Overview:
The record gives the reactivity of an RNA of 177 nucleotides to DMS and 2A3. For 2A3 the reverse transcriptase was SuperScript II with manganese. For 2A3, 5,485 sequencing reads were counted.

RNA sequence: GGGAACGACUCGAGUAGAGUCGAAAACUUGUCAUCCGUUGGUCGCCAAGCGCUCACGCGUGUCGUCGCGUUCCCAGAGUGGAGUCCCCGUGGGGAAGGGGUCGAGUAGGCAGGGUGCCUCAGAGGUGUUGUCUUAAAUGUUCGCAUUUAAGACAACAAAAGAAACAACAACAACAAC
Reactivity to DMS in 0.01 (KOAc 150mM, MgCl2 10mM, bicine 150mM(pH8.5), 24C), signal-to-noise 2, nucleotides 027 to 126: c040u000u020g010u020c050a130u010c030c000g030u010u000g030g010u000c040g030c010c010a090a060g010c040g010c030u000c030a030c050g000c030g030u010g010u000c160g030u000c010g000c040g000u000u000c010c000c010a250g000a160g010u000g000g000a070g000u000c030c000c000c040g010u020g000g000g000g020a140a140g000g000g000g020u000c000g010a040g010u000a020g020g030c020a080g000g020g000u000g010c010c010u000c060a070g000a060g000g010u010
Reactivity to 2A3 in 0.01 (KOAc 150mM, MgCl2 10mM, bicine 150mM(pH8.5), 24C), signal-to-noise 4, nucleotides 027 to 126: c010u040u090g080u120c030a090u060c060c020g050u060u110g030g000u060c030g040c100c000a020a020g010c010g000c020u000c010a020c000g030c010g020u110g290u120c070g180u110c000g000c010g010u010u010c000c000c020a090g060a010g220u300g020g030a020g020u040c000c000c000c000g060u070g010g040g000g010a020a020g000g000g000g000u000c010g000a010g020u060a040g010g120c010a000g010g030g040u070g000c000c000u090c020a070g040a060g110g050u050